[RMDB]
RNA sequence: GGGAACGACUCGAGUAGAGUCGAAAAUGCGAAUAAAGAUGCAGAUAUCGCGGUAAAAUUAGUUUCGAAAACAGGUGUUGGUACCAUUGCAUCUGGGGUGGCAAAAGCAUUUGCAGAUAAAAUUGUCUCCUUAAGAUGGGUUCGCCCAUCUUAAGGAAAAAGAAACAACAACAACAAC
Reactivity to DMS in 0.01 (KOAc 150mM, MgCl2 10mM, bicine 150mM(pH8.5), 24C), signal-to-noise 5, nucleotides 027 to 126: u040g010c010g010a080a070u020a080a080a040g010a050u010g010c030a040g020a100u010a040u020c040g000c030g000g040u000a030a070a070a080u040u030a080g010u000u000u020c080g000a110a050a070a080c080a090g000g020u010g020u010u000g000g010u000a060c040c030a040u020u010g000c020a000u000c020u020g020g010g000g010u020g020g010c090a040a040a070a140g000c050a110u000u000u010g010c040a050g000a070u030a030a050a080a110u010u010g010u010c060
Reactivity to 2A3 in 0.01 (KOAc 150mM, MgCl2 10mM, bicine 150mM(pH8.5), 24C), signal-to-noise 3, nucleotides 027 to 126: u070g020c010g050a060a000u070a070a090a060g120a030u080g000c040a000g030a070u220a070u090c010g000c060g060g040u060a040a060a050a110u150u170a070g000u060u000u040c030g070a050a040a060a070c040a060g050g020u040g090u090u100g040g040u050a080c020c020a080u000u160g000c020a030u000c010u020g010g000g020g020u030g010g000c030a010a040a040a060g000c020a040u000u030u160g040c120a030g000a120u130a150a110a000a050u080u020g000u020c010
Conditions: 150 mM KOAc, 10 mM MgCl2 and 150 mM bicine (pH 8.5), 24 C. This 177-nucleotide RNA was probed chemically with DMS and 2A3. DMS adducts were read by reverse transcription with MarathonRT. For 2A3, 1,076 sequencing reads were counted. The DMS profile rests on 9,850 reads.